[RMDB]
RNA sequence: GGGAACGACUCGAGUAGAGUCGAAAACUUUCUGCUCUCUGGAAACGCCUGCUUCUUUUUUACCUGAGAGCAUUUUUUCGCAUUCUGAUUUCGUUAGUUUAGAUUUUGAAUAUCUUGUCCAGUUAGUGGUCGAUAAAACUUUCGAGUUUUAUCGACCAAAAGAAACAACAACAACAAC
Reactivity to 2A3 in 0.01 (KOAc 150mM, MgCl2 10mM, bicine 150mM(pH8.5), 24C), signal-to-noise 2, nucleotides 027 to 126: c060u080u120u020c090u030g000c000u000c000u000c050u080g000g070a010a060a100c080g130c010c000u030g030c060u240u070c010u000u240u020u020u130u180a130c000c010u050g000a000g000a000g000c000a000u060u000u000u000u000u020c000g020c010a000u000u000c010u040g110a190u000u150u070c020g010u000u130a090g010u060u040u040a020g020a050u070u070u130u120g030a100a050u060a000u250c000u040u070g080u050c020c060a110g060u100u090a090g080u130